Conditions: 150 mM KOAc, 10 mM MgCl2 and 150 mM bicine (pH 8.5), 24 C. This 207-nucleotide RNA was probed chemically with DMS and 2A3. For DMS the reverse transcriptase was MarathonRT.
[RMDB]
RNA sequence: GGGAACGACUCGAGUAGAGUCGAAAAAGCACUGGUACGAUACGUCGUACCAGUGCAGUCGUUGGGAUGGAACGCAAUUAAAUACAUGUGUGACGUUUAUUUGCGAACGACGUAAUUAUUUUUCAAAAUCACGCUAUCGUGUUCGCACGAUAGCGAACUUUGCGAUGAAGUUCGCUUCAUCGCAAAGAAAAGAAACAACAACAACAAC
Reactivity to DMS in 0.01 (KOAc 150mM, MgCl2 10mM, bicine 150mM(pH8.5), 24C), signal-to-noise 2, nucleotides 027 to 156: a140g030c020a020c000u000g040g030u000a020c000g020a050u000a090c280g060u000c010g050u010a000c000c000a000g010u020g020c020a010g030u010c020g030u030u000g000g000g010a130u000g010g000a050a300c000g040c000a040a020u000u000a010a020a020u000a050c120a100u000g040u000g000u000g030a150c110g010u000u000u000a020u030u000u010g000c030g030a050a080c000g000a050c010g020u030a080a050u010u000a090u010u000u000u030u000c040a030a060a080a090u000c030a150c010g010c010u010a040u000c020g030u000g010u000u000c300g040c000a010c000g000a020u000a000g000c000g020a010a020
Reactivity to 2A3 in 0.01 (KOAc 150mM, MgCl2 10mM, bicine 150mM(pH8.5), 24C), signal-to-noise 3, nucleotides 027 to 156: a000g010c000a000c000u000g010g000u000a000c000g010a040u000a060c180g160u000c000g010u010a000c010c000a000g000u000g000c010a000g000u020c010g010u000u060g050g040g020a080u080g070g050a080a040c000g000c030a020a020u040u070a070a040a060u180a060c110a130u120g060u040g070u070g130a100c030g000u000u010u010a040u000u020u020g050c010g010a020a000c020g030a010c000g020u030a080a020u170u110a150u070u140u070u040u110c120a060a030a020a070u150c030a060c100g020c000u000a000u020c000g000u000g030u050u040c170g040c060a000c000g000a000u000a020g000c000g010a000a000